[RMDB]
RNA sequence: GGGAACGACUCGAGUAGAGUCGAAAAGUAGUGUAUGUUUAGUAGGACAUGGAGCUGCGUGUACUGAGUGCCUAGGUGUUAUCCCUAGGGUGUUAGACUCGGGUACUCUGACAGCCUGAAGGGAUGACCGCGGGACUACGUUCGCGUGGUUUCGCGGAAAAGAAACAACAACAACAAC
Reactivity to 2A3 in 0.01 (KOAc 150mM, MgCl2 10mM, bicine 150mM(pH8.5), 24C), signal-to-noise 9, nucleotides 027 to 126: g050u100a010g020u010g020u030a090u080g030u030u060u050a120g030u030a030g030g060a020c020a050u080g030g020a040g010c020u020g000c010g010u020g000u000a010c010u010g010a000g020u030g110c000c000u010a020g040g000u070g080u260u190a060u080c010c000c000u000a000g000g010g010u040g060u030u110a040g000a010c010u000c010g020g010g010u010a020c010u000c020u040g040a060c000a020g120c010c010u030g040a040a050g020g000g010a030u050g040a020
Reactivity to DMS in 0.01 (KOAc 150mM, MgCl2 10mM, bicine 150mM(pH8.5), 24C), signal-to-noise 9, nucleotides 027 to 126: g020u010a050g010u010g020u010a030u010g000u010u000u010a090g010u020a070g010g010a080c070a050u010g000g000a110g010c020u000g010c040g010u010g000u000a020c010u000g000a030g010u000g000c010c000u000a050g000g010u010g010u030u040a080u020c170c000c000u010a140g000g000g010u010g010u020u040a110g010a030c040u000c040g000g000g010u010a020c070u000c020u010g010a090c010a020g010c000c010u000g010a110a100g000g000g000a060u010g000a200